[RMDB]
RNA sequence: GGGAACGACUCGAGUAGAGUCGAAAAGAAUUGUCUCACCAUUUGAAUAGGUGCUGCUCAGCCCUUUUGAGUCUGUCAUCGGAAAGACCAUGGCUUUCUCGCUUUUCAUCUUUUUGGAUGGCUGCUUGCGUCUACUGCCAUUCGUGGCAGUAGACGCAAAAGAAACAACAACAACAAC
Reactivity to 2A3 in 0.01 (KOAc 150mM, MgCl2 10mM, bicine 150mM(pH8.5), 24C), signal-to-noise 2, nucleotides 027 to 126: g080a080a150u210u080g000u000c000u000c020a040c000c010a020u000u100u300g130a110a120u140a100g000g000u000g020c020u030g060c000u010c150a090g000c000c000c000u000u150u000u220g000a020g020u010c050u010g040u000c000a020u050c070g000g040a180a000a000g070a010c000c040a060u120g090g000c020u110u130u040c070u010c090g000c050u040u060u170u120c000a010u000c000u030u140u040u060u100g120g000a000u000g000g070c000u000g010c000u010u020
Chemical mapping of a 177-nucleotide RNA with 2A3. The data come from the RNA Mapping Database (RMDB), library RFM100. Reactivities are rounded to 0.1 and cut off at 0 and 3. Conditions: 150 mM KOAc, 10 mM MgCl2 and 150 mM bicine (pH 8.5), 24 C. The 2A3 profile rests on 643 reads.